Structure probing data (DMS and 2A3) for a 177-nucleotide construct. Values cover nucleotides 27 to 126.

RNA sequence: GGGAACGACUCGAGUAGAGUCGAAAAGGCUGAUAAACCAGGUGCUUACUGGGUAGGUGAAGGUCAAAAAAUCGAAACGUCUAAGGCUACUUGGGUUAAUGCUACAAUGAGAGCGUUUAAAUUAGGGAUCCAAUGUCAUCUUCGGAUGACAUUGGAUAAAAGAAACAACAACAACAAC
Reactivity to DMS in 0.01 (KOAc 150mM, MgCl2 10mM, bicine 150mM(pH8.5), 24C), signal-to-noise 2, nucleotides 027 to 126: g000g030c000u010g030a120u000a060a090a070c030c020a060g000g020u000g010c080u000u010a100c060u010g010g010g010u010a070g020g020u030g050a110a150g010g010u020c040a000a100a000a100a060a040u000c070g010a060a150a080c110g020u000c070u010a070a070g000g000c020u000a000c040u000u000g000g040g010u010u000a030a060u010g010c000u010a030c060a100a050u010g010a090g000a050g020c050g010u000u010u020a030a020a090u010u010a120g020g000g000
Reactivity to 2A3 in 0.01 (KOAc 150mM, MgCl2 10mM, bicine 150mM(pH8.5), 24C), signal-to-noise 1, nucleotides 027 to 126: g000g010c030u030g060a070u040a130a120a030c010c010a000g080g000u080g090c040u050u010a070c050u030g030g020g000u020a070g000g000u030g040a060a050g090g010u110c050a000a000a000a090a040a040u130c090g000a000a090a000c040g060u000c050u090a120a050g090g000c020u020a010c020u060u000g000g030g000u020u120a040a000u070g010c000u000a030c060a060a280u200g000a060g000a020g160c030g040u040u060u100a090a160a090u030u060a040g010g100g010

The DMS profile rests on 1,627 reads.
For 2A3 the reverse transcriptase was SuperScript II with manganese.
The reactions ran in a buffer of 150 mM KOAc, 10 mM MgCl2 and 150 mM bicine (pH 8.5), at 24 C.
Source: RMDB library OK2TST, as collected in RNAgym.